[RMDB]
The data come from the RNA Mapping Database (RMDB), library OK1LIB.
Chemical mapping of a 177-nucleotide RNA with 2A3.
For 2A3, 387 sequencing reads were counted.
For 2A3 the reverse transcriptase was SuperScript II with manganese.

RNA sequence: GGGAACGACUCGAGUAGAGUCGAAAAGAAUGUUUGGCCGCUAUAGUAGCUCUCAAGAACUUCCGAGCAUACGUGGAAGGACUCCCAUUUAAGAUAGUAACCGACCAUGCUUCGCUUAAGUGGUUAACCCGUGGAUGGAGUUCGCUCCAUCCACGGGAAAAGAAACAACAACAACAAC
Reactivity to 2A3 in 0.01 (KOAc 150mM, MgCl2 10mM, bicine 150mM(pH8.5), 24C), signal-to-noise 1, nucleotides 027 to 126: g000a100a020u070g030u090u030u030g000g000c000c000g020c000u070a030u170a160g180u170a000g070c000u000c000u000c120a130a000g170a080a170c010u000u050c110c000g000a000g000c000a030u030a070c080g000u020g050g030a060a070g040g160a000c000u010c080c060c000a080u080u080u070a170a000g000a140u120a040g070u090a120a080c080c000g000a000c070c030a000u090g030c000u080u080c090g140c040u120u000a240a000g010u000g060g000u080u040a110a130